[RMDB]
RNA sequence: GGGAACGACUCGAGUAGAGUCGAAAAGAUAUGGAUCCAGGCUUCUUUUGACGCUCUGAAUUCGGAAACGAAUUACCAGAGCGAUAAGAAGCUGGAUCCUAAGUCAAACAGAUACUUCGGUAUCUGACAAUUGACUCUUGUUCGCAAGAGUCAAUUGAAAAGAAACAACAACAACAAC
Reactivity to 2A3 in 0.01 (KOAc 150mM, MgCl2 10mM, bicine 150mM(pH8.5), 24C), signal-to-noise 3, nucleotides 027 to 126: g000a020u070a030u200g000g000a010u000c010c010a270g300g230c090u020u030c020u000u280u220u290g300a160c080g000c000u000c000u000g020a030a000u010u010c000g030g000a070a040a040c020g010a010a010u020u040a120c080c040a000g000a000g010c000g000a010u010a010a010g000a000a000g000c000u000g000g000a000u000c000c000u000a010a010g020u000c050a090a030a120c020a020g020a000u010a010c000u090u160c300g170g000u000a000u000c000u010g020a070
Reactivity to DMS in 0.01 (KOAc 150mM, MgCl2 10mM, bicine 150mM(pH8.5), 24C), signal-to-noise 3, nucleotides 027 to 126: g000a030u010a300u020g010g000a030u000c000c000a020g020g030c000u000u000c000u000u000u010u020g030a270c120g000c000u000c010u000g000a030a020u000u010c000g000g000a110a050a160c010g020a030a000u010u010a100c300c010a000g000a020g020c000g000a020u000a010a010g000a020a010g000c010u000g000g000a010u000c000c010u010a010a050g000u000c020a120a160a300c020a000g000a000u000a000c000u000u020c220g020g000u000a000u010c000u000g010a210